The data come from the RNA Mapping Database (RMDB), library 15KLIB. Chemical mapping of a 170-nucleotide RNA with DMS and 2A3. For DMS, 33,381 sequencing reads were counted. High 2A3 reactivity points to a flexible backbone, as in loops and unpaired stretches.
[RMDB]
RNA sequence: GGGAACGACUCGAGUAGAGUCGAAAACCUACGGAAAUUCCUGAGCUCCCCUGACGUCCAGGCCGUCCCCUCUCCGAGUGAAGGGAGACUCCGGGAUGUCGUGCAUGCUGGGGACGAACCCGCCUCCUGAGGUACACGUUCGCGUGUACCAAAAGAAACAACAACAACAAC
Reactivity to DMS in 0.01 (KOAc 150mM, MgCl2 10mM, bicine 150mM(pH8.5), 24C), signal-to-noise 4, nucleotides 027 to 129: c020c030u020a000c000g060g000a060a090a090u010u010c000c000u020g030a060g000c040u000c000c000c000c000u000g010a040c030g010u020c020c030a080g000g000c080c180g020u040c000c000c000c000u000c080u040c000c000g050a190g060u080g030a070a050g020g010g010a120g020a000c000u030c010c020g000g000g000a000u030g020u010c040g040u030g000c100a060u000g010c070u050g000g000g000g000a010c060g000a100a100c080c060c000g030c010c010u020c000c030u040g000a120
Reactivity to 2A3 in 0.01 (KOAc 150mM, MgCl2 10mM, bicine 150mM(pH8.5), 24C), signal-to-noise 7, nucleotides 027 to 129: c010c000u010a040c030g040g050a070a040a060u100u050c020c020u120g060a040g020c040u030c000c010c000c020u030g010a010c010g010u000c010c000a000g000g020c040c050g010u010c000c000c000c000u070c010u000c010c040g130a120g090u300g060a020a010g000g000g000a120g000a010c010u000c010c000g000g000g000a000u000g000u000c020g020u070g040c020a050u170g010c030u050g010g010g000g010a000c010g010a020a020c000c000c000g010c010c010u030c000c000u040g040a020